This 207-nucleotide RNA was probed chemically with 2A3. 2A3 adducts were read by reverse transcription with SuperScript II with manganese.
[RMDB]
RNA sequence: GGGAACGACUCGAGUAGAGUCGAAAAGUUGAGCAUGAGAGUCAUUGUUCCUGCCUUCAAAGAGCAUCCACUCUAGCGGGAUCACAAACAUUAAAUAGAGAAAGAAACAAAUACAACUAUCAUAAUGAAUCUGUCAUCUUCGAGCAGGCUGGGGCCACGGAGUUGAGGAAUUCGUUCCUCAACUCCGAAAAGAAACAACAACAACAAC
Reactivity to 2A3 in 0.01 (KOAc 150mM, MgCl2 10mM, bicine 150mM(pH8.5), 24C), signal-to-noise 2, nucleotides 027 to 156: g070u060u070g000a030g030c030a040u050g020a020g000a000g090u010c020a050u090u090g010u030u000c000c010u000g000c000c050u070u110c070a050a100a000g020a000g020c010a060u050c000c000a020c010u030c030u000a000g000c020g030g010g010a000u030c040a020c040a080a200a000c010a000u130u140a030a020a010u100a060g070a010g060a060a070a000g030a050a130a060c070a030a110a160u270a070c050a110a000c030u220a030u300c020a050u060a110a000u060g040a090a080u050c040u050g030u020c010a010u010c010u080u040c000g010a000g000c090a000g020g000c000u000g040g000g030g000c000c000a030